[RMDB]
RNA sequence: GGGAACGACUCGAGUAGAGUCGAAAAGAAUAUUGGCUCGAUCGCCUAUCAUUUCGGCGGCAAGGAAGGGCUGCGGCUUGCCGCUGCCGAUUAUAUUGUCGAAACCUUCCGGCUGAUCGCGGCGCAAGCUACCGACUACGUUCGCGUAGUCGGUAGCAAAAGAAACAACAACAACAAC
Reactivity to DMS in 0.01 (KOAc 150mM, MgCl2 10mM, bicine 150mM(pH8.5), 24C), signal-to-noise 2, nucleotides 027 to 126: g010a200a040u010a180u000u010g000g020c030u000c050g030a060u000c050g000c030c010u000a080u010c120a150u000u010u010c060g000g000c050g010g020c070a060a080g010g000a030a030g010g010g010c050u000g050c010g000g000c000u020u000g030c020c020g010c010u000g000c100c020g000a110u000u010a110u000a100u010u010g030u000c040g010a060a070a140c080c080u000u000c130c090g000g000c030u000g040a030u000c000g000c140g020g000c020g010c080a040a060
Reactivity to 2A3 in 0.01 (KOAc 150mM, MgCl2 10mM, bicine 150mM(pH8.5), 24C), signal-to-noise 2, nucleotides 027 to 126: g080a060a070u160a100u250u160g070g000c000u040c050g040a060u050c010g000c000c000u060a080u070c120a060u010u070u070c000g030g010c000g000g030c050a060a070g060g040a030a110g040g010g000c000u030g010c000g020g030c000u010u150g030c010c050g000c010u020g010c000c000g000a010u050u040a050u070a030u050u130g020u020c000g000a070a060a090c020c010u060u010c010c050g040g000c040u100g000a020u010c010g000c050g010g000c050g040c100a050a010
Structure probing data (DMS and 2A3) for a 177-nucleotide construct. The reactions ran in a buffer of 150 mM KOAc, 10 mM MgCl2 and 150 mM bicine (pH 8.5), at 24 C.